Record summary
Structure probing data (DMS and 2A3) for a 177-nucleotide construct. Values cover nucleotides 27 to 126. It was measured as part of the RMDB library OK2TST. The reactions ran in a buffer of 150 mM KOAc, 10 mM MgCl2 and 150 mM bicine (pH 8.5), at 24 C. For 2A3 the reverse transcriptase was SuperScript II with manganese.
RNA sequence: GGGAACGACUCGAGUAGAGUCGAAAAAACGCCAAUAUUUUGCAUGGCAACAUACGCAACCGCUUCGGCUUGGGUUUCCUGAUAGGCUCGUGGCCGAUCUUUAAAGGCUGAUUUUAAGCCGUGUAGCUGUCGUUGAUAAGUUCGCUUAUCAACGACAAAAAGAAACAACAACAACAAC
Reactivity to DMS in 0.01 (KOAc 150mM, MgCl2 10mM, bicine 150mM(pH8.5), 24C), signal-to-noise 3, nucleotides 027 to 126: a040a030c210g010c030c040a090a090u010a110u010u000u010u020g020c020a070u000g000g000c030a050a120c150a060u000a050c170g000c030a040a050c050c030g030c130u010u000c050g000g020c010u000u000g010g000g020u000u000u020c050c040u010g000a120u010a070g020g010c010u000c090g030u000g000g020c020c000g000a010u000c050u000u000u000a050a070a100g010g000c050u020g000a130u010u000u010u010a100a170g010c000c010g030u000g000u010a070g020c220
Reactivity to 2A3 in 0.01 (KOAc 150mM, MgCl2 10mM, bicine 150mM(pH8.5), 24C), signal-to-noise 2, nucleotides 027 to 126: a000a000c090g060c050c030a120a030u130a150u140u190u100u090g050c000a010u030g000g000c030a050a010c050a060u160a040c110g010c040a030a030c050c010g010c040u040u010c000g010g000c000u040u070g020g100g000u060u070u030c000c040u000g060a110u120a160g020g030c000u000c040g130u120g010g010c020c010g020a020u040c080u090u170u140a150a060a000g010g030c010u030g170a260u030u040u030u180a000a050g000c030c050g000u010g000u000a030g050c060